[RMDB]
The record gives the reactivity of an RNA of 177 nucleotides to 2A3 and DMS. Source: RMDB library VIROID, as collected in RNAgym. Values are in units of 0.01, from 0 to 300, in steps of 10. The RNA was probed in 150 mM KOAc, 10 mM MgCl2 and 150 mM bicine (pH 8.5) at 24 C. DMS adducts were read by reverse transcription with MarathonRT.

RNA sequence: GGGAACGACUCGAGUAGAGUCGAAAAUAAGCCCAGACUUAUGAGAGAGUGAUGACCUCUCAGCCCCUCCACCUUGGGGUGCCCUAUUCGGAGCACUGCAGUUCCCGAUAGAAAGGCUAAGCACCUCGGUAAUAAUUCUCUUCGGAGAAUUAUUACCAAAAGAAACAACAACAACAAC
Reactivity to 2A3 in 0.01 (KOAc 150mM, MgCl2 10mM, bicine 150mM(pH8.5), 24C), signal-to-noise 1, nucleotides 027 to 126: u050a040a010g070c030c020c000a030g080a110c150u240u140a100u170g000a000g010a000g000a010g040u040g080a160u100g050a030c000c000u000c000u000c010a010g030c000c010c000c000u030c030c020a090c000c030u040u090g000g010g000g030u000g010c020c020c000u030a060u000u060c040g000g010a030g020c060a030c100u150g000c070a070g000u050u020c000c000c000g010a000u000a000g090a040a140a020g060g020c050u040a000a010g030c000a000c000c000u010c010
Reactivity to DMS in 0.01 (KOAc 150mM, MgCl2 10mM, bicine 150mM(pH8.5), 24C), signal-to-noise 2, nucleotides 027 to 126: u010a080a170g030c000c000c000a160g000a130c160u000u010a020u000g000a020g010a020g000a020g000u000g000a090u000g010a230c180c010u000c000u000c000a080g010c010c000c000c010u000c090c040a220c150c090u010u000g030g000g000g020u000g010c010c090c000u000a080u000u000c300g000g000a040g000c010a020c160u010g000c200a180g020u000u000c020c000c000g010a090u020a020g000a070a090a070g010g010c170u010a060a110g000c030a030c020c020u000c100